[RMDB]
RNA sequence: GGGAACGACUCGAGUAGAGUCGAAAACGAAAUACAGUGAGUGGACGGAAUAAAUCCCCUUCCCACCUCCCCACUGUCCACUCACUGUCUUCCUAAGAGGAAAUAUAAAUCGGGGGUGGGAAGGGGACGCUGACGUGACUUUCGAGUCACGUCAGCGAAAAGAAACAACAACAACAAC
Reactivity to 2A3 in 0.01 (KOAc 150mM, MgCl2 10mM, bicine 150mM(pH8.5), 24C), signal-to-noise 1, nucleotides 027 to 126: c100g040a140a000a000u250a070c020a000g000u000g020a000g000u000g000g000a000c000g140g000a000a130u190a120a020a100u070c000c010c010c010u000u000c000c000c000a000c000c000u080c060c070c000c020a100c000u020g000u000c010c000a000c000u000c020a000c000u000g000u000c000u000u000c000c000u070a190a010g020a020g040g290a030a110a000u300a060u040a000a050a050u130c020g000g000g000g000g000u030g030g040g000a000a000g000g030g000g030a000